[RMDB]
RNA sequence: GGGAACGACUCGAGUAGAGUCGAAAAAUCACAGAUCUAGAUAAACUGAUACGGUUAACACUACCUGGUAAGACUGAAAAAGAGAAAAAGAUCAAGAGAUCAGUUGAUUGUCUUAUUAAGCUGAUGAAUUUAGGCCGAAAUUCGUUUCGGCCUAAAUAAAAGAAACAACAACAACAAC
Reactivity to DMS in 0.01 (KOAc 150mM, MgCl2 10mM, bicine 150mM(pH8.5), 24C), signal-to-noise 2, nucleotides 027 to 126: a050u010c060a060c080a140g000a030u000c020u000a110g010a090u000a090a090a100c060u000g010a210u000a140c170g010g000u000u000a070a160c130a050c070u000a080c170c060u010g000g020u010a030a100g010a050c010u000g000a060a100a110a100a030g000a100g020a070a060a060a100a120g000a060u000c030a040a100g040a080g020a020u000c010a060g010u000u000g000a110u000u010g010u000c060u000u000a040u000u000a130a090g010c070u000g000a060u010g030a080
An RNA of 177 nucleotides, treated with DMS and read out base by base. It was measured as part of the RMDB library OK2TST. Values cover nucleotides 27 to 126. For DMS, 814 sequencing reads were counted. For DMS the reverse transcriptase was MarathonRT. The reactions ran in a buffer of 150 mM KOAc, 10 mM MgCl2 and 150 mM bicine (pH 8.5), at 24 C.